[RMDB]
An RNA of 177 nucleotides, treated with 2A3 and read out base by base.
It was measured as part of the RMDB library OK1LIB.
The 2A3 profile rests on 539 reads.
The RNA was probed in 150 mM KOAc, 10 mM MgCl2 and 150 mM bicine (pH 8.5) at 24 C.

RNA sequence: GGGAACGACUCGAGUAGAGUCGAAAAGAGCUAAUAUCUACUUCGUUUGUGCAUAUCACUAUAGGGAAGCUCGUUCAAGCGAUGGGUUGCGAGAAAUCGCAGUGCCUAGUGGAAUGAACGGCUCGAAGGGUUUUGUUUACUUCGGUAAACAAAACCCAAAAGAAACAACAACAACAAC
Reactivity to 2A3 in 0.01 (KOAc 150mM, MgCl2 10mM, bicine 150mM(pH8.5), 24C), signal-to-noise 2, nucleotides 027 to 126: g080a000g000c080u070a010a000u030a050u040c000u000a030c060u100u200c040g050u150u060u140g030u000g020c000a070u030a030u280c000a000c030u190a110u040a180g110g080g050a160a000g000c010u050c130g000u000u000c030a060a000g010c000g000a000u220g000g000g030u020u000g070c010g000a020g000a030a050a000u000c000g000c000a030g040u030g290c020c000u070a020g010u040g040g050a040a020u050g010a010a010c000g000g030c000u000c100g030a040a080